[RMDB]
RNA sequence: GGGAACGACUCGAGUAGAGUCGAAAAUGGAGAUUGUGGUUUGCUCCAGCCACAGGAAGAAUGGGGCUCUGUCGGUGCUGCAGAAGAGCAUCCAGCCCCAGGUGGUGACAACCUUUGAGCUUCCCGGCUGCUACGACAUGUGGACAGUCAUCGCCCAGCUCCCUAAAAUAUUCGUAUUUUAGGGAGCAAAAGAAACAACAACAACAAC
Reactivity to DMS in 0.01 (KOAc 150mM, MgCl2 10mM, bicine 150mM(pH8.5), 24C), signal-to-noise 2, nucleotides 027 to 156: u010g010g010a130g020a130u010u010g010u000g010g020u000u000u000g010c060u020c020c010a150g030c020c010a030c010a180g010g000a120a080g000a110a160u020g010g030g020g040c030u000c000u010g050u000c090g010g020u010g020c020u000g010c080a270g010a180a270g000a070g020c010a050u000c030c010a090g010c020c010c000c010a040g000g020u000g040g030u000g000a090c030a080a090c030c010u000u010u010g000a070g000c040u000u000c010c000c000g030g010c000u010g040c010u000a120c040g010a110c080a110u000g040u000g000g010a090c060a090g030u000c070a050u000c100g000c000c010c020a200
Reactivity to 2A3 in 0.01 (KOAc 150mM, MgCl2 10mM, bicine 150mM(pH8.5), 24C), signal-to-noise 3, nucleotides 027 to 156: u060g020g000a020g020a050u110u110g040u060g060g050u080u060u080g020c020u010c000c020a000g020c000c010a020c040a020g060g140a110a050g030a050a130u070g000g000g000g000c000u060c040u080g160u080c060g000g010u000g000c010u010g030c050a120g040a300a030g030a080g010c010a000u020c020c030a070g060c000c000c010c000a000g000g000u010g000g010u010g020a000c030a000a120c020c000u040u040u130g030a020g010c000u020u010c000c000c000g010g000c010u010g000c000u020a010c020g220a090c050a160u300g000u030g010g030a050c020a010g020u020c010a060u150c060g030c040c030c010a020

An RNA of 207 nucleotides, treated with DMS and 2A3 and read out base by base.